[RMDB]
RNA sequence: GGGAACGACUCGAGUAGAGUCGAAAAUAAGAUAGGUGCCUCAAGAAAAUCUCAAAGAUAACCUAAACUAAAUAGGCCAAUAUAGUCCUCCAUGGUACUGGAUAAAGGUUUGCAAAGAAUAUACUGUAGGGUUCAUUUCACUGCAAGUCUUUUGUAGCGCUAAUGAUAAGUUCGCUUAUCAUUAGCGAAAAGAAACAACAACAACAAC
Reactivity to DMS in 0.01 (KOAc 150mM, MgCl2 10mM, bicine 150mM(pH8.5), 24C), signal-to-noise 2, nucleotides 027 to 156: u010a060a140g000a170u000a140g030g040u000g040c010c030u000c050a070a160g010a100a090a130a100u010c000u010c080a040a110a200g000a140u000a070a080c010c000u000a040a090a290c080u010a090a070a200u000a040g000g030c000c020a030a130u010a100u000a070g000u000c010c000u000c040c050a060u010g020g050u000a030c020u000g010g040a110u010a020a050a070g010g010u000u000u000g010c010a080a070a200g020a070a090u000a080u000a050c030u000g010u000a090g010g000g010u000u000c020a200u000u000u000c020a160c090u000g020c000a000a050g020u000c020u000u000u000u010g000u000a130g020
Reactivity to 2A3 in 0.01 (KOAc 150mM, MgCl2 10mM, bicine 150mM(pH8.5), 24C), signal-to-noise 3, nucleotides 027 to 156: u100a020a020g070a040u080a060g020g040u010g020c010c010u080c050a060a040g030a050a130a040a050u040c030u060c180a160a120a010g060a090u080a070a050c000c000u060a100a050a120c060u130a070a110a250u090a070g030g000c030c000a060a030u150a020u050a140g050u030c030c030u000c040c030a010u060g040g010u040a060c010u000g010g050a010u090a020a060a010g000g000u020u030u020g000c000a040a060a020g000a030a020u040a010u020a170c040u090g120u220a100g020g060g050u050u020c020a020u040u020u060c020a010c070u010g010c000a000a010g020u050c000u020u070u050u040g110u060a040g080
This 207-nucleotide RNA was probed chemically with DMS and 2A3. For 2A3, 2,017 sequencing reads were counted.